RNA sequence: GGGAACGACUCGAGUAGAGUCGAAAAGGCUGCGUAUCACUCUAGGGUACGUGAUAGUGCGAUAUAAGAAGCACUUGUACAUGCCGGCAGGGACAGUUAAGAGAUGGCCGCAGUCUCGUGUCCCUGCAAAAGGAGUUCUCGUUCGCGAGAACUCCAAUCAUGAGAAUUACUUCGGUAAUUCUCAUGAAAAAGAAACAACAACAACAAC
Reactivity to 2A3 in 0.01 (KOAc 150mM, MgCl2 10mM, bicine 150mM(pH8.5), 24C), signal-to-noise 1, nucleotides 027 to 156: g010g000c010u020g000c020g010u010a010u020c020a070c210u160c140u240a120g110g000g000u020a010c020g000u020g040a070u070a040g010u000g000c030g030a030u010a020u060a300a080g100a100a030g010c000a000c000u000u030g040u050a070c030a050u140g010c000c000g020g000c010a000g000g010g010a000c010a070g030u140u190a170a040g020a010g000a020u050g100g030c080c050g040c080a020g020u000c000u000c000g030u020g000u000c000c000c000u000g000c000a000a010a000a000g000g000a000g000u000u010c000u000c000g030u060u050c210g000c000g070a000g000a000a000c000u000c000c000a000a020
Reactivity to DMS in 0.01 (KOAc 150mM, MgCl2 10mM, bicine 150mM(pH8.5), 24C), signal-to-noise 4, nucleotides 027 to 156: g030g020c010u000g010c020g000u000a060u000c020a120c090u010c130u010a180g020g070g010u010a010c030g010u000g020a100u000a020g030u000g010c000g000a180u010a190u000a230a160g000a150a300g010c000a030c010u000u010g000u000a120c060a080u010g020c000c020g010g000c000a030g010g020g010a030c000a080g020u000u010a080a130g010a080g020a050u000g020g030c040c220g010c130a190g010u000c010u000c000g030u010g010u000c000c000c000u000g000c010a000a010a070a100g000g000a010g010u000u000c010u010c020g040u000u000c300g040c020g000a030g000a010a010c000u000c000c000a000a050
Overview:
This 207-nucleotide RNA was probed chemically with 2A3 and DMS. The DMS profile rests on 9,062 reads. The 2A3 profile rests on 6,679 reads.